[RMDB]
RNA sequence: GGGAACGACUCGAGUAGAGUCGAAAAGAUUUCAACAGAUGGAGAUACACAAAUGUUUGAAUCCCAGUAACAAAAAUCCUGGUAUCUCGGGUAUACAGUAGUGCAGAUACUGUAUUUUUAAUGCUCCUUAGGUUUUCCAUCUUCGGAUGGAAAACAAGUUAACGUCCUUGUUCGCAAGGACGUUAACAAAAGAAACAACAACAACAAC
Reactivity to 2A3 in 0.01 (KOAc 150mM, MgCl2 10mM, bicine 150mM(pH8.5), 24C), signal-to-noise 2, nucleotides 027 to 156: g010a020u060u040u060c000a010a010c010a020g020a050u020g000g000a050g010a000u040a020c010a000c000a000a110a040u020g030u050u040u090g040a010a000u000c010c010c020a060g110u190a230a050c080a160a010a000a000a030u030c000c010u010g000g000u000a030u020c030u030c010g000g000g000u000a000u010a000c010a030g000u030a010g040u030g300c030a020g120a150u010a020c010u000g000u000a000u020u000u000u010u140a130a090u120g040c030u120c040c020u030u100a080g010g120u030u020u000u000c000c000a010u000c000u020u030c150g080g010a000u000g010g040a000a010a000a000c010a000a010
Structure probing data (2A3) for a 207-nucleotide construct.
Conditions: 150 mM KOAc, 10 mM MgCl2 and 150 mM bicine (pH 8.5), 24 C.